Chemical mapping of a 177-nucleotide RNA with 2A3 and DMS. Reactivities are given for positions 27 through 126. For 2A3, 1,859 sequencing reads were counted.
RNA sequence: GGGAACGACUCGAGUAGAGUCGAAAAAGCAACGGGGCUAGCAGGCAGGUGUUCCGCCUCCCGAGAGGGGACGAGUGAGGCUUAUCCCGGGGAACUCGGCGAAUCGUCCCCAUCUAGCAGAGCCCCGGUCUUAUUCUUUGUUCGCAAAGAAUAAGACAAAAGAAACAACAACAACAAC
Reactivity to 2A3 in 0.01 (KOAc 150mM, MgCl2 10mM, bicine 150mM(pH8.5), 24C), signal-to-noise 1, nucleotides 027 to 126: a000g100c030a030a020c000g020g000g030g000c010u020a020g030c050a040g050g000c030a000g040g000u060g160u300u060c100c070g000c010c000u030c000c000c000g040a020g020a010g000g000g000g000a000c000g000a030g080u090g050a010g020g090c030u030u040a030u070c000c000c010g020g020g010g000a100a040c030u010c010g030g010c060g100a040a060u010c000g010u000c000c050c020c000a040u010c010u030a020g080c050a050g000a010g140c000c020c030c060g000
Reactivity to DMS in 0.01 (KOAc 150mM, MgCl2 10mM, bicine 150mM(pH8.5), 24C), signal-to-noise 2, nucleotides 027 to 126: a080g000c050a150a300c020g010g020g010g020c010u010a060g010c080a080g020g010c140a020g020g020u000g010u020u020c160c070g000c010c000u000c110c050c030g000a040g020a100g000g000g010g000a020c000g020a040g000u010g000a080g010g010c060u000u000a070u000c020c000c010g000g000g020g000a110a300c030u000c020g010g010c160g010a030a060u000c020g010u000c000c010c010c020a030u000c000u000a130g010c070a130g010a050g000c000c010c000c000g020